[RMDB]
RNA sequence: GGGAACGACUCGAGUAGAGUCGAAAAGUUACAUUUAAUCUCGAAAUUCAGAGUACAUAUCUUUGAAGUAUUCUGAUAUCUAUUUUCUCCUGUAAAGAAUCCUGAAGUUGCUACAUUAUUAAGGACAGAGAAGUAUUCUGCACGAAAGACGGGAUCAGCCUUGAUAGAAAUUCGUUUCUAUCAAGGCAAAAGAAACAACAACAACAAC
Reactivity to 2A3 in 0.01 (KOAc 150mM, MgCl2 10mM, bicine 150mM(pH8.5), 24C), signal-to-noise 2, nucleotides 027 to 156: g050u090u090a010c010a060u130u140u140a130a070u050c040u010c080g020a020a040a080u120u010c030a000g010a000g000u000a010c020a040u290a120u300c170u140u290u300g060a150a040g000u030a030u020u010c010u040g000a020u000a020u000c010u040a090u010u050u040u020c000u040c010c040u020g020u040a000a140a000g040a000a070u080c000c000u050g040a080a030g070u130u090g100c040u080a030c020a020u060u230a040u090u100a290a020g020g010a050c050a040g040a000g020a070a000g030u070a090u090u000c040u030g030c020a000c060g090a100a030a020g000a010c000g040g010g020a030u100c020a010
Reactivity to DMS in 0.01 (KOAc 150mM, MgCl2 10mM, bicine 150mM(pH8.5), 24C), signal-to-noise 1, nucleotides 027 to 156: g000u000u010a070c100a160u000u010u020a120a110u010c060u030c060g000a090a070a230u010u000c020a030g010a050g010u000a030c020a140u000a140u010c100u000u000u010g020a160a220g010u000a030u000u010c010u000g010a040u000a140u010c040u000a140u000u000u000u000c020u000c030c060u010g010u000a090a080a040g010a090a090u040c030c050u000g020a050a230g020u000u000g020c030u000a110c030a130u000u000a110u000u000a010a100g040g000a070c040a020g000a060g010a060a110g020u000a120u000u000c030u000g000c090a070c060g000a040a110a060g010a060c100g000g050g000a170u000c040a160
An RNA of 207 nucleotides, treated with 2A3 and DMS and read out base by base.
It was measured as part of the RMDB library OK3TST.
The RNA was probed in 150 mM KOAc, 10 mM MgCl2 and 150 mM bicine (pH 8.5) at 24 C.
DMS adducts were read by reverse transcription with MarathonRT.
The 2A3 profile rests on 487 reads.
For 2A3 the reverse transcriptase was SuperScript II with manganese.
For DMS, 1,933 sequencing reads were counted.